[RMDB]
RNA sequence: GGGAACGACUCGAGUAGAGUCGAAAAUGGAUUUCGAGUUGCAGACAAUACGUCUGUAAUUUGCAAGACGAGUCGUACUGGCUCUGAAGUUACCUACGGGUAGUUCAGGUAAUGGGGCCGCCUGUCAAAUAUGUAGGUAUUUCGAUACCUACAUAUUAAAAGAAACAACAACAACAAC
Reactivity to 2A3 in 0.01 (KOAc 150mM, MgCl2 10mM, bicine 150mM(pH8.5), 24C), signal-to-noise 9, nucleotides 027 to 126: u130g110g050a060u040u030u030c020g010a010g010u000u000g020c000a000g010a010c030a140a220u230a300c150g000u000c000u000g000u000a000a010u010u010u050g020c040a040a030g080a050c010g000a000g000u000c000g000u020a060c070u070g020g000c000u000c030u100g090a090a040g060u050u010a010c000c010u020a060c120g100g020g100u160a090g040u100u100c060a010g010g020u050a060a060u140g020g000g010g000c000c010g020c010c010u100g050u100c040a040
Reactivity to DMS in 0.01 (KOAc 150mM, MgCl2 10mM, bicine 150mM(pH8.5), 24C), signal-to-noise 9, nucleotides 027 to 126: u030g010g010a130u000u000u000c010g010a030g020u000u000g000c000a000g000a010c000a170a160u030a140c240g010u000c010u000g010u000a000a000u000u000u010g010c160a090a110g000a110c010g000a020g010u000c010g010u000a100c130u010g010g010c020u000c010u000g010a060a100g010u010u000a020c000c000u000a080c120g020g010g010u010a050g000u010u010c090a020g010g010u010a040a060u020g010g000g000g010c010c010g000c030c020u000g000u010c160a080
The record gives the reactivity of an RNA of 177 nucleotides to 2A3 and DMS. The data come from the RNA Mapping Database (RMDB), libraries RFM100 and RFMREP. For DMS the reverse transcriptase was MarathonRT. Reactivities are rounded to 0.1 and cut off at 0 and 3. The RNA was probed in 150 mM KOAc, 10 mM MgCl2 and 150 mM bicine (pH 8.5) at 24 C.